RNA sequence: GGGAACGACUCGAGUAGAGUCGAAAAACGGUGCGGAAGUUCGCGCUUCCGUGAAACGCGAAAAUCGGACGGUGGCUGCAAGUCGCAUCGCAAAACCGCGGCAAGUGGAGUUAGCGAGAGGCGGCUGAAACCAUCCAACACUUCGGUGUUGGAUGAACUUGUUGAAUUUGUUCGCAAAUUCAACAAGAAAAGAAACAACAACAACAAC
Reactivity to DMS in 0.01 (KOAc 150mM, MgCl2 10mM, bicine 150mM(pH8.5), 24C), signal-to-noise 2, nucleotides 027 to 156: a050c010g050g000u000g000c020g000g000a100a070g020u000u030c160g010c220g010c000u000u010c010c100g040u000g000a030a040a080c000g090c010g010a040a020a150a150u000c050g020g010a070c030g020g020u000g030g030c020u000g010c080a050a100g000u000c040g050c010a150u010c020g080c030a070a080a090a130c010c060g000c010g000g060c140a140a110g020u000g000g000a170g000u000u000a190g000c060g000a050g010a110g010g020c000g030g070c010u000g000a080a040a170c100c000a000u000c000c000a000a000c000a000c000u000u000c300g040g060u000g040u000u000g020g000a020u010g000a040a040
Reactivity to 2A3 in 0.01 (KOAc 150mM, MgCl2 10mM, bicine 150mM(pH8.5), 24C), signal-to-noise 4, nucleotides 027 to 156: a000c030g000g000u080g010c010g000g000a020a020g020u130u220c060g020c000g000c090u020u000c010c010g020u000g030a090a100a010c050g020c020g040a050a040a000a120u110c030g010g030a020c020g030g030u040g040g030c060u060g010c090a060a010g010u020c010g000c010a030u040c000g000c030a070a050a000a010c010c010g010c020g090g050c210a180a100g010u040g020g020a080g030u050u070a010g010c020g020a030g020a070g170g030c000g000g000c010u000g010a040a010a000c040c000a000u000c000c000a000a000c010a000c000u040u080c210g100g000u010g010u000u000g000g000a000u000g000a010a030
Chemical mapping of a 207-nucleotide RNA with DMS and 2A3. For DMS the reverse transcriptase was MarathonRT. The DMS profile rests on 2,951 reads. 2A3 adducts were read by reverse transcription with SuperScript II with manganese. Source: RMDB library M2RFPK, as collected in RNAgym. Conditions: 150 mM KOAc, 10 mM MgCl2 and 150 mM bicine (pH 8.5), 24 C.